[RMDB]
RNA sequence: GGGAACGACUCGAGUAGAGUCGAAAAGGAUUGUGAAAUUCCAAGAAUAGAAUAGUUUAGUUAAGUCUAGUUUAGUUUUUGUGUUGAGUGCUUCCUCGUCGGCGGACGAUCUAGGAAGCACUUUUUACUACUUAGAUAACUUCGGUUAUCUAAGUAGAAAAGAAACAACAACAACAAC
Reactivity to DMS in 0.01 (KOAc 150mM, MgCl2 10mM, bicine 150mM(pH8.5), 24C), signal-to-noise 5, nucleotides 027 to 126: g010g010a050u010u000g000u010g000a110a060a100u010u000c020c020a100a100g010a080a090u000a080g000a070a060u000a070g010u000u010u010a080g010u000u000a060a120g000u000c020u000a050g010u010u010u000a130g010u000u000u000u000u000g010u000g020u000u000g000a020g020u000g000c000u000u000c000c000u000c270g000u000c010g010g030c280g010g010a080c000g000a070u000c210u010a030g010g000a010a010g000c000a000c000u000u000u000u000u010a110
Source: RMDB library RFMREP, as collected in RNAgym. Chemical mapping of a 177-nucleotide RNA with DMS. DMS adducts were read by reverse transcription with MarathonRT. Conditions: 150 mM KOAc, 10 mM MgCl2 and 150 mM bicine (pH 8.5), 24 C.